The data come from the RNA Mapping Database (RMDB), library OK2TST. Chemical mapping of a 177-nucleotide RNA with 2A3 and DMS. Reactivities are given for positions 27 through 126.
RNA sequence: GGGAACGACUCGAGUAGAGUCGAAAAGUGGAGGUGGCAGACGACUUACCUUAUAUGGACGCUUAUGACGCUCCACUGGAUGCGCAUGUCAACGCUGUCGAUCAUGUCGCUGGUCCACCGCCUCCCCCCGUAUGUUAUUCUUCGGAAUAACAUACGGAAAAGAAACAACAACAACAAC
Reactivity to 2A3 in 0.01 (KOAc 150mM, MgCl2 10mM, bicine 150mM(pH8.5), 24C), signal-to-noise 9, nucleotides 027 to 126: g090u080g000g020a020g010g020u020g010g000c020a020g030a120c030g010a020c030u080u130a160c030c030u170u100a250u040a040u290g080g000a010c030g010c030u210u110a070u190g070a110c030g010c040u040c010c010a280c090u050g020g010a060u160g000c020g000c030a040u110g060u170c040a030a050c100g030c180u140g040u050c020g050a150u060c040a110u090g030u030c000g000c010u010g020g080u010c010c000a010c010c010g010c000c010u030c000c000c000c000
Reactivity to DMS in 0.01 (KOAc 150mM, MgCl2 10mM, bicine 150mM(pH8.5), 24C), signal-to-noise 6, nucleotides 027 to 126: g030u010g000g010a050g000g030u000g020g010c030a120g010a080c020g010a060c030u010u000a120c140c070u010u010a110u010a090u010g010g000a120c050g010c040u000u010a080u010g010a140c040g000c040u000c000c010a110c160u000g010g020a050u010g010c010g010c040a030u000g010u000c110a030a090c120g010c130u000g000u000c030g000a050u000c100a050u000g010u010c010g000c010u000g010g010u000c000c020a040c010c050g000c010c010u000c010c010c010c100
The reactions ran in a buffer of 150 mM KOAc, 10 mM MgCl2 and 150 mM bicine (pH 8.5), at 24 C.